[RMDB]
RNA sequence: GGGAACGACUCGAGUAGAGUCGAAAAGGGCCUACAGUAUGCCUCUAACGUCAUUGACGAGAUUGAGUUACGCAAGGAACAACUAAGAGAUGAUGGGGAGGAUUGACACUAUGUGUUUCUCACCGAAAAUUAAAACUCCGAAGAUGGAUACCAAUCAGCCCAUUCUUACUUUCGAGUAAGAAUGGGCAAAAGAAACAACAACAACAAC
Reactivity to 2A3 in 0.01 (KOAc 150mM, MgCl2 10mM, bicine 150mM(pH8.5), 24C), signal-to-noise 1, nucleotides 027 to 156: g010g000g000c060c070u090a090c050a050g040u010a000u130g000c010c000u070c000u190a240a000c000g030u030c070a200u000u300g040a040c040g000a000g030a080u010u170g000a070g010u050u000a040c010g000c050a000a080g080g010a080a020c000a070a020c010u090a070a000g000a000g010a070u180g030a030u080g010g000g000g030a030g030g010a070u020u110g040a040c030a000c030u260a100u270g120u000g000u070u000u000c040u000c000a050c070c140g070a100a060a000a060u020u140a000a000a000a150c040u260c100c120g030a000a070g070a070u180g060g030a030u070a250c040c040a090a070u080c070a060
An RNA of 207 nucleotides, treated with 2A3 and read out base by base. Conditions: 150 mM KOAc, 10 mM MgCl2 and 150 mM bicine (pH 8.5), 24 C. 2A3 adducts were read by reverse transcription with SuperScript II with manganese. The 2A3 profile rests on 352 reads.